[RMDB]
RNA sequence: GGGAACGACUCGAGUAGAGUCGAAAAGGUGGAGGAGGAUGAAGUUCGCCAUUCAAACAACCCUUUCUGCACCGGUCCUGUGCUGCCCGUUGCCUGCAGGAGCAAAACACACCCACUCCGUGUCCGGCUAACUAUUGGAGUUCGCUCCAAUAGUUAGAAAAGAAACAACAACAACAAC
Reactivity to DMS in 0.01 (KOAc 150mM, MgCl2 10mM, bicine 150mM(pH8.5), 24C), signal-to-noise 6, nucleotides 027 to 126: g000g030u000g020g010a050g010g010a060g010g010a080u010g010a100a120g000u010u000c100g030c090c070a140u010u000c080a060a070a100c120a100a150c100c030c000u000u010u000c020u000g010c020a020c030c020g010g010u000c010c000u000g010u010g000c050u000g010c030c020c040g020u000u000g010c020c020u000g010c040a080g000g000a070g020c080a050a050a080a070c120a090c120a110c030c010c020a110c060u010c030c030g010u000g010u010c040c040g000g010
Reactivity to 2A3 in 0.01 (KOAc 150mM, MgCl2 10mM, bicine 150mM(pH8.5), 24C), signal-to-noise 4, nucleotides 027 to 126: g020g010u030g030g120a010g030g010a020g040g000a060u080g050a120a040g030u090u080c030g060c080c030a070u100u110c050a050a130a120c020a040a070c020c010c000u010u090u060c040u060g030c020a020c010c010g010g000u040c000c000u020g040u050g050c010u050g000c020c010c010g110u100u070g030c000c020u020g010c010a020g010g050a020g050c020a030a080a090a010c050a010c010a030c010c000c010a030c010u030c010c030g040u040g050u060c010c010g040g010
This 177-nucleotide RNA was probed chemically with DMS and 2A3. The reactions ran in a buffer of 150 mM KOAc, 10 mM MgCl2 and 150 mM bicine (pH 8.5), at 24 C. Values cover nucleotides 27 to 126. The DMS profile rests on 6,680 reads.